[RMDB]
The record gives the reactivity of an RNA of 177 nucleotides to DMS and 2A3.
RNA sequence: GGGAACGACUCGAGUAGAGUCGAAAAGGUCGCAAUGCGGUGGUGCCGCCACGGUGUCCACGUCGAGGCGCCGGCCUUGUGGUACCGGUAAAGUGCUGUGGCGACCGCGAUCUGGCGCGAAGCCUGACGGUCUUACAGAAUUCGUUCUGUAAGACCGAAAAGAAACAACAACAACAAC
Reactivity to DMS in 0.01 (KOAc 150mM, MgCl2 10mM, bicine 150mM(pH8.5), 24C), signal-to-noise 6, nucleotides 027 to 126: g020g010u000c020g020c030a180a100u010g010c040g000g020u000g010g010u000g010c010c010g020c020c250a070c010g000g010u000g000u000c010c030a070c120g020u010c180g000a090g010g020c030g010c080c100g000g010c080c100u000u000g010u000g000g030u010a020c020c010g010g010u010a070a110a140g020u010g020c030u000g010u010g010g010c010g010a030c040c010g010c060g020a060u000c060u000g010g000c040g010c100g010a140a210g010c010c010u000g020a200
Reactivity to 2A3 in 0.01 (KOAc 150mM, MgCl2 10mM, bicine 150mM(pH8.5), 24C), signal-to-noise 3, nucleotides 027 to 126: g030g000u090c030g000c090a110a170u190g020c030g030g110u140g060g170u030g050c030c000g000c020c010a050c000g000g040u030g070u070c020c010a060c090g220u170c090g050a080g000g000c020g000c050c010g100g020c000c010u020u110g070u010g000g000u040a030c010c030g050g020u230a200a120a040g190u170g110c060u070g010u080g160g010c000g020a020c020c000g010c000g010a090u000c040u100g030g000c010g010c070g060a080a030g010c010c000u010g010a020

For 2A3, 4,083 sequencing reads were counted. For DMS, 8,809 sequencing reads were counted.